[RMDB]
Background: Chemical mapping of a 207-nucleotide RNA with 2A3 and DMS.
RNA sequence: GGGAACGACUCGAGUAGAGUCGAAAACUGCGCCCAUUACCACACAGAGAAGGGAUCUUACGUCACCGGAUUAAAGAAGAAUGUCAAGACUUUCAGGCUGGUAACGGAGAAGGUAAAAUCAGGGCAAACACCGCCAUCGACAGAUAUUUUACACGAGUCACUCACAAGUGUUCGCACUUGUGAGUGAAAAAGAAACAACAACAACAAC
Reactivity to 2A3 in 0.01 (KOAc 150mM, MgCl2 10mM, bicine 150mM(pH8.5), 24C), signal-to-noise 3, nucleotides 027 to 156: c040u090g020c050g010c030c010c000a020u040u090a060c000c020a040c030a010c010a070g040a030g050a130a070g030g020g010a040u030c000u020u110a070c060g020u000c020a010c010c000g060g000a030u100u250a080a050a050g080a020a010g050a040a030u090g070u150c040a070a050g030a140c000u020u020u020c090a020g050g080c040u010g010g000u010a030a020c040g050g000a020g010a040a090g010g020u040a040a030a000a070u120c050a040g000g000g000c000a030a100a000c070a040c050c030g040c000c030a030u040c030g030a040c010a030g080a030u050a080u100u130u110u120a040c110a000c000g030a020g020
Reactivity to DMS in 0.01 (KOAc 150mM, MgCl2 10mM, bicine 150mM(pH8.5), 24C), signal-to-noise 1, nucleotides 027 to 156: c030u010g000c000g010c040c060c020a290u010u000a040c060c030a160c120a090c050a090g010a150g010a110a080g030g020g020a000u000c080u000u010a070c070g000u000c000a060c060c040g000g070a190u000u010a060a050a120g020a100a080g000a130a070u000g020u010c080a010a120g000a090c020u000u000u000c120a120g040g010c040u000g110g020u010a090a070c050g010g000a170g030a010a030g000g000u010a030a010a050a090u000c090a100g010g020g020c020a100a050a070c030a030c050c050g090c010c040a040u010c020g010a060c070a100g000a170u000a040u000u000u000u000a070c050a080c130g010a200g000